[RMDB]
RNA sequence: GGGAACGACUCGAGUAGAGUCGAAAAGCUCGUCCACUCCGAUCGAGCCACUAGGAGCUAUCGGAACUAUUAGCGGAGUGACCAAAUCUCUCGACUUCAGUUGGACAUCGUGAGAUCGAGGUCCAAAGACGUAUGAUGCCUUCGGGUAUCGUACGUCAAAAGAAACAACAACAACAAC
Reactivity to DMS in 0.01 (KOAc 150mM, MgCl2 10mM, bicine 150mM(pH8.5), 24C), signal-to-noise 9, nucleotides 027 to 126: g010c010u000c130g000u010c030c030a230c080u010c000c000g000a030u000c070g010a050g000c000c020a130c210u030a100g010g000a060g000c020u000a030u000c010g000g000a040a070c050u010a020u070u010a040g010c040g000g010a070g010u040g010a050c010c010a140a130a040u000c010u000c000u000c000g010a040c270u010u010c050a180g020u030u020g000g000a060c270a170u000c010g000u000g010a040g010a040u010c060g000a180g000g010u010c000c050a060a070a100
Reactivity to 2A3 in 0.01 (KOAc 150mM, MgCl2 10mM, bicine 150mM(pH8.5), 24C), signal-to-noise 9, nucleotides 027 to 126: g010c000u010c020g050u020c020c010a020c010u000c000c000g010a030u050c050g060a010g010c000c000a070c060u160a100g070g030a110g020c000u020a020u030c010g020g010a020a030c020u030a040u180u080a020g030c030g030g030a050g020u120g010a020c000c010a010a040a030u000c010u000c000u010c010g020a030c020u070u040c080a150g050u120u150g080g010a010c010a030u010c010g010u010g030a030g000a010u050c030g060a050g010g000u000c000c000a010a040a020
This 177-nucleotide RNA was probed chemically with DMS and 2A3. For DMS, 37,938 sequencing reads were counted. The data come from the RNA Mapping Database (RMDB), library OK1LIB.